[RMDB]
Chemical mapping of a 177-nucleotide RNA with 2A3. Values are in units of 0.01, from 0 to 300, in steps of 10. The RNA was probed in 150 mM KOAc, 10 mM MgCl2 and 150 mM bicine (pH 8.5) at 24 C. The 2A3 profile rests on 492 reads. For 2A3 the reverse transcriptase was SuperScript II with manganese.
RNA sequence: GGGAACGACUCGAGUAGAGUCGAAAAACCUUUGUGGGAUUGGUUUUUGCUCCUGCACCAUGGUUGUCUGAGCACGGAGCAUGCUUGUCUGCUCAUACGCCAUGGUUCGUGAGCAGGAACCUCCACUUCAGGCCGACCUAUUCGUAGGUCGGCCUGAAAAAGAAACAACAACAACAAC
Reactivity to 2A3 in 0.01 (KOAc 150mM, MgCl2 10mM, bicine 150mM(pH8.5), 24C), signal-to-noise 1, nucleotides 027 to 126: a030c130c000u180u070u300g020u110g040g010g130a300u050u110g060g000u000u000u000u000u000g000c000u030c000c000u000g000c020a000c000c000a000u000g010g000u080u300g000u000c000u000g000a000g000c010a040c280g000g000a010g060c040a010u200g110c110u090u080g000u110c010u000g000c020u000c000a000u000a030c020g000c000c000a040u000g000g010u000u000c000g030u020g040a000g000c000a000g000g000a000a000c000c000u000c000c000a000c000u000